[RMDB]
RNA sequence: GGGAACGACUCGAGUAGAGUCGAAAAAGUAUUAUGGCAUAGCGAAGUACGCUGAGGCUGAAGGGCUGGACAUAUCCAGGCUCCCGAUUUCGAUUAAGAUUCUGCUGGAGAAUCUCCUGCGCUGCCAACCUAAAUACGGGUUCGCCCGUAUUUAGGUAAAAGAAACAACAACAACAAC
Reactivity to DMS in 0.01 (KOAc 150mM, MgCl2 10mM, bicine 150mM(pH8.5), 24C), signal-to-noise 3, nucleotides 027 to 126: a080g000u000a020u000u000a240u010g020g050c030a070u000a050g020c020g020a140a120g000u010a100c090g020c060u000g010a150g010g010c010u000g000a140a130g000g000g040c000u000g020g020a100c300a090u000a080u010c010c020a050g000g000c080u010c010c030c000g000a180u000u020u010c060g000a180u000u000a060a160g010a070u000u000c020u000g010c050u000g000g020a020g000a080a080u000c050u000c030c010u000g020c080g010c030u010g000c060c090a080
Reactivity to 2A3 in 0.01 (KOAc 150mM, MgCl2 10mM, bicine 150mM(pH8.5), 24C), signal-to-noise 2, nucleotides 027 to 126: a000g100u100a110u210u110a100u220g050g000c040a030u060a060g020c020g090a200a010g150u090a070c030g000c040u040g060a040g150g010c040u040g070a080a060g010g020g000c020u000g010g010a020c040a140u300a080u090c000c000a000g140g000c070u100c030c010c020g030a030u080u090u060c030g000a040u180u000a030a020g020a000u050u030c000u020g000c020u130g070g000a020g010a050a040u000c000u020c050c010u050g030c010g010c050u080g070c040c030a050